[RMDB]
RNA sequence: GGGAACGACUCGAGUAGAGUCGAAAAUGGUGUUAAGUGGAAUAAGUGGAAAAAUAUACAUAUAUGUACAGGGGGCUACAUAUAUGUAUAUGCCCCCUCGCGAAAGUAUAAGUAGGUAUAAGGUGGAGAUGGUAUAGGACUUCGGUCCUAUACCAUCAAAAGAAACAACAACAACAAC
Reactivity to DMS in 0.01 (KOAc 150mM, MgCl2 10mM, bicine 150mM(pH8.5), 24C), signal-to-noise 2, nucleotides 027 to 126: u040g000g030u000g020u000u000a090a230g030u020g000g030a050a010u010a060a110g000u010g010g000a030a050a080a110a050u000a030u000a000c000a000u000a000u000a020u010g000u000a020c110a100g030g000g000g000g000c210u000a030c010a000u010a030u020a030u000g000u000a010u000a010u020g000c070c000c000c020c000u010c050g020c020g000a030a070a150g000u010a040u020a070a110g020u000a010g000g010u010a040u020a050a030g010g050u000g030g010a290
Reactivity to 2A3 in 0.01 (KOAc 150mM, MgCl2 10mM, bicine 150mM(pH8.5), 24C), signal-to-noise 1, nucleotides 027 to 126: u080g000g030u030g060u080u120a150a030g010u100g050g040a030a080u140a150a090g010u060g060g160a080a060a000a110a000u050a000u000a000c050a000u070a000u020a000u050g010u020a020c100a040g030g000g000g020g020c000u030a000c000a000u010a000u010a010u000g030u030a000u010a000u020g010c000c020c000c030c000u010c040g060c010g020a020a010a000g060u050a120u000a150a020g070u030a030g050g050u080a080u010a100a060g090g010u020g030g050a090
This 177-nucleotide RNA was probed chemically with DMS and 2A3. For 2A3 the reverse transcriptase was SuperScript II with manganese. For 2A3, 589 sequencing reads were counted. The data come from the RNA Mapping Database (RMDB), library OK1LIB. In probing experiments dimethyl sulfate is read out at A N1 and C N3, which are open when not base-paired.